Structure probing data (DMS and 2A3) for a 177-nucleotide construct.
It was measured as part of the RMDB library OK2TST.
For 2A3, 6,350 sequencing reads were counted.
RNA sequence: GGGAACGACUCGAGUAGAGUCGAAAAUGAUAGGGCGUGCCCGCCCUGGCCGUGGCGGCAAGGUUGAGGCCGAUCUCGCCAUAGCCGUGCGCGCAAGGCACAAGUGCUGUCAGCAGAUCGAGAAAAAGUCCAUAUCGAUAUUCGUAUCGAUAUGGACAAAAGAAACAACAACAACAAC
Reactivity to DMS in 0.01 (KOAc 150mM, MgCl2 10mM, bicine 150mM(pH8.5), 24C), signal-to-noise 4, nucleotides 027 to 126: u000g000a060u000a020g010g010g000c110g040u000g030c030c030c060g010c010c020c010u000g000g030c020c030g040u000g020g010c000g010g000c160a110a140g000g010u010u000g020a110g020g010c070c050g000a110u010c090u000c030g020c010c050a040u000a090g020c010c000g020u010g010c120g000c090g000c110a090a120g000g000c010a010c040a080a190g020u010g010c020u000g010u000c040a070g020c090a090g000a090u000c080g000a120g000a080a090a080a100a120
Reactivity to 2A3 in 0.01 (KOAc 150mM, MgCl2 10mM, bicine 150mM(pH8.5), 24C), signal-to-noise 4, nucleotides 027 to 126: u060g010a010u040a020g070g020g000c030g020u030g030c000c030c020g000c020c000c000u010g020g000c010c010g000u010g020g000c000g000g000c040a030a080g050g030u050u150g120a140g130g100c030c030g010a070u050c070u020c020g000c000c000a020u030a010g000c010c000g010u030g010c110g010c000g000c090a110a120g020g010c020a000c020a080a060g050u050g100c010u030g020u050c020a010g000c020a010g030a140u120c080g100a060g140a160a100a030a030a020